[RMDB]
RNA sequence: GGGAACGACUCGAGUAGAGUCGAAAAUUGAAGGCUCCCACAUACACACUUGACCAUGUUCGCUGAUGGAAAAGAGGUGGUGAGAGCCAAGAUCUCCAUGCACUGCCAUCGCAAGAACCUGUGUUUGCAUCCUAUCCACCUUCGGGUGGAUAGGAUGAAAAGAAACAACAACAACAAC
Reactivity to DMS in 0.01 (KOAc 150mM, MgCl2 10mM, bicine 150mM(pH8.5), 24C), signal-to-noise 2, nucleotides 027 to 126: u010u010g010a250a200g010g010c010u000c000c000c010a060c040a080u000a300c110a070c050a020c010u010u010g000a300c030c000a020u000g000u010u020c110g010c280u050g000a050u030g000g000a010a040a020a050g000a070g040g040u000g000g030u010g000a040g000a000g010c000c040a040a150g000a120u000c000u000c030c040a040u000g040c030a030c020u000g010c020c030a050u020c040g000c040a130a080g000a010a170c050c080u000g000u010g000u000u010u010g010
Reactivity to 2A3 in 0.01 (KOAc 150mM, MgCl2 10mM, bicine 150mM(pH8.5), 24C), signal-to-noise 2, nucleotides 027 to 126: u050u060g060a150a100g030g020c020u110c040c230c010a020c000a000u300a060c040a010c010a010c030u010u030g000a030c010c000a070u040g100u210u230c180g010c130u180g070a010u000g080g000a050a030a020a000g100a060g090g000u020g020g000u000g000a130g000a000g030c000c010a010a000g030a040u010c040u000c020c000a040u130g000c010a020c000u010g040c030c030a060u010c040g040c080a040a020g050a120a070c040c020u060g000u010g010u020u060u070g020
An RNA of 177 nucleotides, treated with DMS and 2A3 and read out base by base. The 2A3 profile rests on 1,246 reads. DMS adducts were read by reverse transcription with MarathonRT. Conditions: 150 mM KOAc, 10 mM MgCl2 and 150 mM bicine (pH 8.5), 24 C. Values cover nucleotides 27 to 126. The data come from the RNA Mapping Database (RMDB), library OK2TST.